[RMDB]
RNA sequence: GGGAACGACUCGAGUAGAGUCGAAAAGGAUUAUAGUAGCAUAUCAACCCUGAUUUGCCAACUGACGAACACAUCUGAUGGGCAUAAUGAGAGCAUUUAUGGGAUUGGUUAUGGUUCAUACAUAAUCUGCCUUGUUCUUGUUCGCAAGAACAAGGCAAAAAGAAACAACAACAACAAC
Reactivity to 2A3 in 0.01 (KOAc 150mM, MgCl2 10mM, bicine 150mM(pH8.5), 24C), signal-to-noise 1, nucleotides 027 to 126: g010g010a010u020u020a020u060a150g060u070a000g040c010a010u000a000u050c000a010a040c010c000c020u050g040a060u030u030u030g000c060c060a080a120c130u020g050a020c000g010a050a030c140a030c000a190u060c030u060g020a100u070g040g000g000c060a060u120a150a070u130g080a060g000a000g030c040a040u040u090u070a170u190g020g020g080a110u030u090g100g000u070u010a020u000g060g000u080u140c010a040u040a110c000a000u020a020a020u000c010
Reactivity to DMS in 0.01 (KOAc 150mM, MgCl2 10mM, bicine 150mM(pH8.5), 24C), signal-to-noise 1, nucleotides 027 to 126: g010g010a090u000u020a040u000a120g030u030a050g030c000a020u000a020u010c000a050a070c000c000c040u040g000a080u000u000u000g010c030c020a170a210c070u000g000a150c210g010a080a110c120a020c090a090u030c100u010g000a090u010g000g000g010c020a010u010a090a050u010g000a210g010a110g010c030a060u010u000u000a090u010g010g010g010a060u010u000g010g010u000u010a000u010g010g020u010u000c120a130u000a080c020a010u000a000a030u010c040